[RMDB]
RNA sequence: GGGAACGACUCGAGUAGAGUCGAAAACUUGCUGAAAGCCAUCGCUCAAAAUGCCAAUCGGUUUAAUCCUCAAGAUAUCGCCAAUACCCUCUGGGCAUUAGCUACCAUGGGGAUCAACUGGCGUGAACUAUCAUGCUAAUUUCGAUUAGCAUGAUAGAAAAGAAACAACAACAACAAC
Reactivity to 2A3 in 0.01 (KOAc 150mM, MgCl2 10mM, bicine 150mM(pH8.5), 24C), signal-to-noise 4, nucleotides 027 to 126: c010u020u080g020c020u050g050a090a030a020g010c010c010a060u040c040g020c020u040c040a120a130a030a040u090g010c010c020a040a100u080c020g000g030u020u040u070a050a060u040c000c020u050c040a040a020g040a140u090a040u100c010g010c000c000a030a040u080a120c010c010c000u010c030u030g000g010g000c030a110u160u140a030g010c030u060a100c000c000a020u050g000g000g000g000a030u080c030a040a080c030u030g010g000c000g000u000g000a010a010
Reactivity to DMS in 0.01 (KOAc 150mM, MgCl2 10mM, bicine 150mM(pH8.5), 24C), signal-to-noise 9, nucleotides 027 to 126: c050u000u010g020c050u000g010a070a090a120g020c030c040a050u000c070g010c030u010c080a060a060a090a070u000g020c040c060a080a100u000c100g010g010u000u000u000a080a100u000c020c010u000c120a070a070g000a080u000a060u000c050g000c000c010a010a050u000a120c040c000c010u010c200u010g010g000g010c040a110u010u010a090g010c070u010a050c010c010a040u000g000g010g000g010a060u000c100a070a060c080u000g010g010c010g020u000g010a080a180

The record gives the reactivity of an RNA of 177 nucleotides to 2A3 and DMS. 2A3 adducts were read by reverse transcription with SuperScript II with manganese. The reactions ran in a buffer of 150 mM KOAc, 10 mM MgCl2 and 150 mM bicine (pH 8.5), at 24 C. Values are in units of 0.01, from 0 to 300, in steps of 10. For DMS the reverse transcriptase was MarathonRT.